[RMDB]
RNA sequence: GGGAACGACUCGAGUAGAGUCGAAAAUAGGCUGACGCCAAGAUCCCGGAUAACCAGACAGGACACGAAAAGACAAUGACCUGCUUCCUGCCUGCCCUUGCCGGUGCCAACACCAUCUAUGGCGCCGCCAGCAUGAAAAGUUCGCUUUUCAUGCUGGAAAAGAAACAACAACAACAAC
Reactivity to DMS in 0.01 (KOAc 150mM, MgCl2 10mM, bicine 150mM(pH8.5), 24C), signal-to-noise 2, nucleotides 027 to 126: u010a140g010g030c020u000g030a070c210g010c030c020a040a100g000a100u010c020c000c000g040g020a130u010a040a070c170c040a050g000a040c060a060g030g000a080c110a050c210g010a040a050a140a080g020a080c190a040a140u010g010a130c040c070u000g000c130u010u010c010c000u000g000c020c010u000g000c000c030c000u000u010g010c110c010g000g000u000g000c020c010a020a070c080a130c100c080a060u000c080u010a120u010g000g010c000g010c000c020g000
Reactivity to 2A3 in 0.01 (KOAc 150mM, MgCl2 10mM, bicine 150mM(pH8.5), 24C), signal-to-noise 2, nucleotides 027 to 126: u140a010g040g000c030u070g070a050c120g020c010c000a010a020g060a050u030c000c010c000g010g020a120u090a060a050c050c000a000g020a030c000a020g030g030a020c020a010c130g100a060a040a040a030g150a030c070a100a150u090g050a090c020c010u030g000c060u060u020c000c010u000g000c000c000u020g000c020c000c000u040u070g030c050c020g000g010u010g000c010c000a030a040c030a080c060c020a060u020c030u110a160u070g000g000c000g000c010c000g000
An RNA of 177 nucleotides, treated with DMS and 2A3 and read out base by base. The RNA was probed in 150 mM KOAc, 10 mM MgCl2 and 150 mM bicine (pH 8.5) at 24 C. For DMS, 1,242 sequencing reads were counted. Values cover nucleotides 27 to 126.